RNA sequence: GGGAACGACUCGAGUAGAGUCGAAAAGACGAACACGCCGACGAGCCACGCCGGGUUGAAGGACAAGACGGCAUGAGCACCGAGGUGAUCGUCGCUCUGUGCAGCUUGGUCGGCGUCGUCGUGACGGCGAUCCUGGCGCACCGGGCCGGCGGGCGUGCACCCCCUACAUCUUCGGAUGUAGGGGGUGAAAAGAAACAACAACAACAAC
Reactivity to 2A3 in 0.01 (KOAc 150mM, MgCl2 10mM, bicine 150mM(pH8.5), 24C), signal-to-noise 1, nucleotides 027 to 156: g070a040c060g010a050a010c000a010c040g060c030c000g100a210c010g000a070g020c010c020a020c030g030c000c000g020g060g030u020u090g120a150a030g150g020a020c020a020a010g100a100c000g000g060c010a000u080g030a050g020c030a040c140c040g030a060g000g000u100g000a130u100c030g020u100c000g000c000u020c010u000g000u000g000c070a120g020c210u040u010g060g000u020c000g040g240c000g000u000c000g010u160c060g060u200g020a000c020g010g070c000g000a020u230c010c010u020g050g000c030g010c040a110c010c000g000g000g060c130c000g000g000c000g020g000g000c010g000u000g000

Structure probing data (2A3) for a 207-nucleotide construct. Conditions: 150 mM KOAc, 10 mM MgCl2 and 150 mM bicine (pH 8.5), 24 C. The 2A3 profile rests on 602 reads.